[RMDB]
RNA sequence: GGGAACGACUCGAGUAGAGUCGAAAAUAUUAGGGUGUGAGAGUAUCUCUCUCCCAGCCGGUUCGCGCAGCCAUCUUUUUCGACUUUACUUGGGUUAGCUGCGCGAACUGGCUGGCGUUGCCAGCAAUACACUAAACGUGUUCGCACGUUUAGUGUAAAAAGAAACAACAACAACAAC
Reactivity to DMS in 0.01 (KOAc 150mM, MgCl2 10mM, bicine 150mM(pH8.5), 24C), signal-to-noise 2, nucleotides 027 to 126: u000a050u000u000a170g000g000g020u000g000u000g000a010g010a040g020u010a140u020c050u000c010u000c010u000c010c000c000a030g010c010c010g000g010u010u000c000g000c000g000c000a010g010c010c150a030u000c020u000u010u000u000u000c040g000a040c040u010u010u010a080c180u000u000g010g000g000u000u020a050g020c000u000g000c000g000c010g010a010a010c000u000g000g010c000u000g000g000c010g010u010u000g010c000c010a170g020c200a070a100
Reactivity to 2A3 in 0.01 (KOAc 150mM, MgCl2 10mM, bicine 150mM(pH8.5), 24C), signal-to-noise 1, nucleotides 027 to 126: u110a030u050u080a080g000g020g000u030g000u030g020a000g010a020g030u300a300u060c040u000c000u040c000u040c030c000c020a000g030c000c000g010g000u000u000c010g000c010g010c010a020g000c030c030a110u070c100u070u160u000u040u080c040g000a030c010u110u220u200a070c040u110u160g050g000g000u030u060a000g000c000u000g000c000g000c020g000a000a000c000u010g000g000c000u010g000g020c000g020u010u030g100c010c010a020g040c040a040a050

Chemical mapping of a 177-nucleotide RNA with DMS and 2A3.
For DMS the reverse transcriptase was MarathonRT.
The 2A3 profile rests on 2,153 reads.
It was measured as part of the RMDB library M2PK90.